RNA sequence: GGGAACGACUCGAGUAGAGUCGAAAAGAUAUGGACCGAGGUAGGGAGAUCGAACAACGAAUUACGUUAUCGGAAACGAUAACGUAAUUCGUUGUUCUUGAUCUUUGAUCUACUCGGUCCUAAGUCACAUCUGUACUAAGUUCGCUUAGUACAGAUGAAAAGAAACAACAACAACAAC
Reactivity to DMS in 0.01 (KOAc 150mM, MgCl2 10mM, bicine 150mM(pH8.5), 24C), signal-to-noise 5, nucleotides 027 to 126: g010a060u000a300u010g000g000a010c000c000g000a020g010g020u010a010g000g000g010a010g000a000u000c000g000a010a010c000a010a000c000g000a030a010u000u000a010c000g010u000u000a000u000c000g000g000a130a110a250c000g010a010u000a000a000c010g010u000a000a000u000u000c000g010u000u000g000u000u000c010u000u010g020a000u000c000u000u000u010g010a080u020c010u000a050c000u000c000g000g010u000c000c000u000a010a070g010u000c040a300

An RNA of 177 nucleotides, treated with DMS and read out base by base. DMS adducts were read by reverse transcription with MarathonRT. The DMS profile rests on 15,069 reads.